The record gives the reactivity of an RNA of 177 nucleotides to 2A3 and DMS. DMS adducts were read by reverse transcription with MarathonRT. High DMS reactivity at an A or C suggests that its Watson-Crick edge is free. For 2A3, 2,615 sequencing reads were counted.

RNA sequence: GGGAACGACUCGAGUAGAGUCGAAAAUUAUAUAGCGUGUGCAAGACGCUGAACUUGCCAUGAUCUGGAACUUUAGUGCUGAGGUCCGAGUUCCAGAUCAUCAUUUCGGACCUCAGCAGUAAUAUAAUCAUACUAACGGAUUCGUCCGUUAGUAUGAAAAAGAAACAACAACAACAAC
Reactivity to 2A3 in 0.01 (KOAc 150mM, MgCl2 10mM, bicine 150mM(pH8.5), 24C), signal-to-noise 2, nucleotides 027 to 126: u120u040a060u020a040u110a210g040c010g020u020g090u100g030c000a010a010g050a010c040g040c230u040g050a060a070c010u010u060g030c020c020a020u030g000a020u010c020u030g000g040a030a060c020u070u190u150a230g070u170g100c000u010g000a010g000g020u000c000c010g020a000g030u040u020c020c000a000g000a000u000c000a000u000c010a010u010u140u110c000g000g000a000c010c010u000c000a000g000c000a000g000u010a000a120u180a000u080a120a140
Reactivity to DMS in 0.01 (KOAc 150mM, MgCl2 10mM, bicine 150mM(pH8.5), 24C), signal-to-noise 4, nucleotides 027 to 126: u000u010a080u010a130u000a080g010c020g020u010g010u010g010c110a040a070g010a090c040g020c070u000g000a070a080c070u000u000g010c010c160a070u000g000a070u000c010u000g020g020a030a030c100u010u000u000a080g010u010g000c000u000g000a020g020g010u000c010c010g020a050g010u000u000c010c030a020g010a020u000c060a000u010c270a090u010u000u010c030g010g000a010c010c000u000c000a000g010c000a040g000u010a040a050u010a090u020a060a150
The DMS profile rests on 4,869 reads.